[RMDB]
RNA sequence: GGGAACGACUCGAGUAGAGUCGAAAAAGCGGCGCGUGACCGACGUCAAUCACCUCGCCGAGCUGACGCAGGCGCGCGUGUCCGCGCAGCCGGGCAUCGCGCCGACGCUGCGCUGGCUUGCCGCGCAAUACCUAGUAAUAUUCGUAUUACUAGGUAUAAAAGAAACAACAACAACAAC
Reactivity to 2A3 in 0.01 (KOAc 150mM, MgCl2 10mM, bicine 150mM(pH8.5), 24C), signal-to-noise 9, nucleotides 027 to 126: a000g020c020g010g000c010g000c020g030u040g050a300c010c030g030a050c010g040u030c000a020a080u070c020a050c070c050u120c050g140c090c080g010a030g030c080u020g010a010c010g000c030a040g020g000c000g000c000g000c010g020u020g000u000c010c000g000c010g000c010a000g030c040c030g030g010g000c050a160u190c170g030c010g000c070c020g010a020c030g000c010u010g000c000g000c010u010g010g000c000u020u150g010c010c010g000c010g000c010a020
Reactivity to DMS in 0.01 (KOAc 150mM, MgCl2 10mM, bicine 150mM(pH8.5), 24C), signal-to-noise 9, nucleotides 027 to 126: a120g010c030g010g010c010g010c130g020u000g010a120c030c010g000a150c040g000u000c030a060a100u010c090a110c110c050u000c120g010c090c060g000a060g010c120u000g000a020c020g010c280a100g000g010c030g000c010g000c040g010u000g010u000c010c050g000c010g010c060a030g010c040c120g000g000g010c010a080u010c150g000c140g010c010c020g010a060c160g010c020u000g000c000g010c000u000g010g000c010u000u010g010c030c020g000c010g010c160a120